RNA sequence: GGGAACGACUCGAGUAGAGUCGAAAAUAGAAGAGAUCUGUUGUUAGAAAACCGGGAAUUCCGUGAACAAUUUGAUUUAAAAGAUACCUAUCUCUUCAGUCACCUUGAUAUCUACCAACAGUAUGCACUUUUAGGCUAGGUUCGCCUAGCCUAAAAGAAAAGAAACAACAACAACAAC
Reactivity to DMS in 0.01 (KOAc 150mM, MgCl2 10mM, bicine 150mM(pH8.5), 24C), signal-to-noise 1, nucleotides 027 to 126: u000a110g000a120a150g020a180g020a120u010c000u000g020u010u000g030u000u010a110g020a030a020a090a170c210c040g000g000g000a120a160u020u000c020c020g000u010g030a120a080c050a010a030u000u020u000g000a030u000u000u000a030a000a040a010g000a030u020a030c150c140u010a060u000c030u000c020u000u000c090a040g010u000c010a070c030c100u000u000g000a090u000a080u000c000u000a050c060c010a000a030c010a020g000u000a070u000g010c180a160